[RMDB]
An RNA of 207 nucleotides, treated with DMS and 2A3 and read out base by base. Values cover nucleotides 27 to 156. For DMS, 5,865 sequencing reads were counted. The reactions ran in a buffer of 150 mM KOAc, 10 mM MgCl2 and 150 mM bicine (pH 8.5), at 24 C.
RNA sequence: GGGAACGACUCGAGUAGAGUCGAAAAAAUUAGAGCCAGAUUUAGCAGACGGCGGAAAAUAUUCACAUACAAUGUUGCGUGGUGCUUUGGGUAAAAUGGAUAAACAAGUGAUUCGUAUUGCGUCAGUAUUGCACACGAUCCGCAAUUGGUUUAAUCCUCCACAUAGUAAGUUCGCUUACUAUGUGGAAAAAGAAACAACAACAACAAC
Reactivity to DMS in 0.01 (KOAc 150mM, MgCl2 10mM, bicine 150mM(pH8.5), 24C), signal-to-noise 3, nucleotides 027 to 156: a060a120u000u000a090g010a120g000c000c040a130g020a170u010u000u000a060g020c050a090g000a070c300g030g010c030g010g020a050a050a110a110u000a090u000u010c060a050c070a140u000a090c090a080a100u010g010u010u000g000c020g010u000g030g030u000g010c010u000u000u000g020g030g000u000a040a030a050a060u010g010g020a190u000a020a050a060c050a050a100g020u020g010a100u000u000c030g020u000a050u000u000g010c020g030u010c050a120g000u010a100u010u000g000c050a030c050a060c060g000a050u000c030c000g010c030a020a070u000u010g000g010u000u000u010a040a150u000c060c030
Reactivity to 2A3 in 0.01 (KOAc 150mM, MgCl2 10mM, bicine 150mM(pH8.5), 24C), signal-to-noise 3, nucleotides 027 to 156: a000a020u190u110a040g010a000g060c020c020a010g050a080u070u120u090a040g040c030a010g000a030c010g000g040c000g000g060a030a090a030a060u250a080u190u220c070a040c050a050u220a060c040a060a160u100g010u060u150g050c020g010u030g010g020u030g030c000u050u060u060g020g000g030u060a020a040a070a050u060g010g020a030u030a070a130a030c040a110a040g000u030g180a090u130u090c050g010u040a020u100u050g010c010g040u060c020a030g040u040a070u080u280g000c020a000c000a030c100g040a040u050c060c030g000c010a020a090u030u080g020g010u010u040u040a050a080u040c010c000